[RMDB]
RNA sequence: GGGAACGACUCGAGUAGAGUCGAAAACUUUAUGGACUUCUCGGAAACAAUCUUAUCGCGACUAACGAGUUGGGCCAACAAGCCAAGUGCUGCAGUUGCAAGAUUGUGGCUUGUGGAUAGCAGUGCCCCCUAGUACUCGGUUCGCCGAGUACUAGGGAAAAGAAACAACAACAACAAC
Reactivity to DMS in 0.01 (KOAc 150mM, MgCl2 10mM, bicine 150mM(pH8.5), 24C), signal-to-noise 2, nucleotides 027 to 126: c040u010u020u040a140u020g000g000a030c060u000u010c010u020c000g000g000a070a160a080c140a080a070u000c060u030u000a090u010c150g000c100g000a040c110u010a140a160c000g020a030g000u000u000g010g010g000c010c020a090a080c150a020a060g000c000c010a050a060g010u040g000c040u000g040c080a150g000u000u000g000c070a040a050g000a090u010u020g030u010g000g000c030u010u000g010u000g000g000a080u000a050g010c030a070g000u000g010c040c040
Reactivity to 2A3 in 0.01 (KOAc 150mM, MgCl2 10mM, bicine 150mM(pH8.5), 24C), signal-to-noise 5, nucleotides 027 to 126: c020u080u060u170a180u160g070g020a010c000u000u010c000u020c010g030g020a070a120a060c060a030a110u060c060u110u200a100u170c100g020c050g110a020c030u060a100a030c030g020a000g040u020u010g030g150g020c000c010a010a060c030a020a030g030c030c000a050a030g060u040g050c010u010g010c020a120g020u160u110g050c000a010a040g020a080u050u160g060u030g090g040c000u030u020g010u030g050g010a060u030a070g030c030a010g010u050g030c010c000

The record gives the reactivity of an RNA of 177 nucleotides to DMS and 2A3. For DMS the reverse transcriptase was MarathonRT. The reactions ran in a buffer of 150 mM KOAc, 10 mM MgCl2 and 150 mM bicine (pH 8.5), at 24 C. The 2A3 profile rests on 3,672 reads.